[RMDB]
RNA sequence: GGGAACGACUCGAGUAGAGUCGAAAACAUACUGCUUUGAGGUGGCAGCCCAGCGAAGCCCAGAUAAGAAGACGUGCCCCAUGAAGGUGGGUCCUGUGGGUUCGGGGGCCCUUUCUUCCUGUUCCAUGUCCUCUAGGCCCCCAAGACUAUGUCAUGGCUACCCGUAGGUAUUCGUACCUACGGGUAGAAAAGAAACAACAACAACAAC
Reactivity to 2A3 in 0.01 (KOAc 150mM, MgCl2 10mM, bicine 150mM(pH8.5), 24C), signal-to-noise 2, nucleotides 027 to 156: c020a030u250a070c010u000g040c010u150u110u120g060a100g020g060u030g030g040c010a030g020c020c000c000a090g040c120g050a050a000g030c000c000c020a080g020a190u250a150a060g090a070a010g040a040c120g160u040g050c000c000c020c000a030u100g080a030a090g060g070u070g020g040g000u040c030c050u070g020u090g030g020g000u080u090c030g000g010g010g000g000c040c020c000u040u130u010c030u030u030c000c020u040g050u100u040c010c000a020u050g020u040c000c020u000c000u050a110g100g000c050c000c000c000c000a030a020g010a010c000u050a060u210g030u040c020a020u010g050g000
Reactivity to DMS in 0.01 (KOAc 150mM, MgCl2 10mM, bicine 150mM(pH8.5), 24C), signal-to-noise 1, nucleotides 027 to 156: c020a100u010a090c030u000g030c040u000u000u000g010a050g050g040u010g010g070c040a080g020c000c020c040a180g010c020g030a030a180g040c010c020c000a280g000a200u020a080a120g010a040a050g000a090c050g000u000g010c020c000c010c050a170u020g000a070a080g010g010u010g030g030g020u020c010c020u020g040u010g040g030g050u000u000c050g010g050g000g060g030c020c010c040u020u020u020c010u000u000c020c020u000g010u000u020c040c040a120u000g020u010c010c030u010c020u000a060g020g080c020c010c020c030c080a000a070g000a060c050u010a090u010g010u000c020a090u010g010g010
Source: RMDB library OK3TST, as collected in RNAgym. An RNA of 207 nucleotides, treated with 2A3 and DMS and read out base by base. Reactivities are given for positions 27 through 156. The RNA was probed in 150 mM KOAc, 10 mM MgCl2 and 150 mM bicine (pH 8.5) at 24 C.